[RMDB]
RNA sequence: GGGAACGACUCGAGUAGAGUCGAAAACCCAGACCGUUCGCGGUCUGGGAAAACCGGAAUAAACAUGGCCCCAUGAGCCGAACCGGAAGGGCGUCCGCCCAAAAACUUGUGUCUUCGGACACAAGAACAUUAAAACGCGGUUCGCCGCGUUUUAAUGAAAAGAAACAACAACAACAAC
Reactivity to DMS in 0.01 (KOAc 150mM, MgCl2 10mM, bicine 150mM(pH8.5), 24C), signal-to-noise 2, nucleotides 027 to 126: c030c010c000a020g000a010c000c010g010u000u010c200g070c000g020g000u000c000u000g000g010g010a010a000a060a110c010c000g000g060a170a100u010a100a080a070c090a120u000g010g010c020c020c140c230a140u030g020a100g000c030c010g000a080a120c000c020g000g000a160a120g000g000g000c030g000u000c090c090g000c010c010c030a060a050a010a040a120c000u000u010g000u000g000u010c000u000u010c130g010g000a010c000a000c010a000a000g000a040a120
Reactivity to 2A3 in 0.01 (KOAc 150mM, MgCl2 10mM, bicine 150mM(pH8.5), 24C), signal-to-noise 2, nucleotides 027 to 126: c010c010c010a000g000a010c010c010g010u020u030c200g020c000g080g030u010c000u040g020g000g020a050a140a000a010c000c000g000g070a070a170u190a200a120a050c140a210u170g010g000c020c030c010c040a110u200g030a000g020c020c020g020a040a040c010c000g040g010a040a040g060g000g000c020g090u000c090c090g040c030c000c000a020a130a000a020a060c000u000u020g000u000g000u000c000u030u060c250g090g000a000c010a000c000a000a010g000a010a000